[RMDB]
RNA sequence: GGGAACGACUCGAGUAGAGUCGAAAAAAGCAUGGGCUCACGGGCUAUACCUGUGAUGUAAAACCCACAUACUAUACUACAUUGCACUGUGUACUAGUAUGGAUAGGGCACUAAUCUUUACUCUAUUCUAGCAGUCUCCAUUCGUGGAGACUGCUAGAAAAGAAACAACAACAACAAC
Reactivity to 2A3 in 0.01 (KOAc 150mM, MgCl2 10mM, bicine 150mM(pH8.5), 24C), signal-to-noise 2, nucleotides 027 to 126: a000a010g040c050a030u140g020g020g020c000u000c000a000c000g000g000g000c000u120a040u200a200c010c010u010g000u060g020a100u260g000u020a030a040a010a040c000c000c000a000c010a000u020a000c000u000a000u000a020c020u070a000c000a020u130u130g120c230a120c130u040g000u000g000u010a040c060u010a100g020u000a000u000g000g000a010u060a180g000g000g000c080a020c050u040a070a090u070c000u050u120u080a050c030u070c020u060a200u040u000

The record gives the reactivity of an RNA of 177 nucleotides to 2A3. Reactivities are given for positions 27 through 126. It was measured as part of the RMDB library RFM100. 2A3 adducts were read by reverse transcription with SuperScript II with manganese. The RNA was probed in 150 mM KOAc, 10 mM MgCl2 and 150 mM bicine (pH 8.5) at 24 C. High 2A3 reactivity points to a flexible backbone, as in loops and unpaired stretches.